This 177-nucleotide RNA was probed chemically with 2A3 and DMS. DMS adducts were read by reverse transcription with MarathonRT.
[RMDB]
RNA sequence: GGGAACGACUCGAGUAGAGUCGAAAAAACACCUCGGGCGGCAGUGGGGUGGAGAGGCUCUCGCCAGUGUCCACCCGCAUCAGGCUCGCGCCGUUCUGGAAGACGUGCCAGCCGUCGGGGUCGAGCCUGCAUACUCGACGUUCGCGUCGAGUAUGCAAAAAGAAACAACAACAACAAC
Reactivity to 2A3 in 0.01 (KOAc 150mM, MgCl2 10mM, bicine 150mM(pH8.5), 24C), signal-to-noise 4, nucleotides 027 to 126: a000a000c020a010c000c000u000c030g060g010g020c000g000g000c010a030g050u070g040g080g000g000u050g050g010a010g020a010g010g010c070u120c060u110c300g030c010c000a070g030u090g220u230c000c000a020c000c020c020g000c000a000u030c020a080g010g010c020u030c020g000c000g000c000c010g090u240u130c110u280g050g010a140a080g020a200c010g030u050g000c000c020a020g000c000c010g000u000c010g000g000g000g000u050c060g020a050g050c010c000
Reactivity to DMS in 0.01 (KOAc 150mM, MgCl2 10mM, bicine 150mM(pH8.5), 24C), signal-to-noise 2, nucleotides 027 to 126: a060a110c140a040c000c000u020c070g070g000g000c000g010g040c000a200g010u000g000g020g010g000u010g000g030a130g000a150g040g060c000u030c210u000c180g040c070c000a020g010u070g000u000c000c000a000c000c000c000g000c020a060u000c170a180g030g040c050u000c010g000c140g000c020c010g040u090u000c260u050g020g010a030a050g000a090c000g000u000g000c030c000a200g030c040c030g000u000c000g000g010g000g000u000c100g000a110g000c000c000

For DMS, 1,894 sequencing reads were counted. The 2A3 profile rests on 2,152 reads.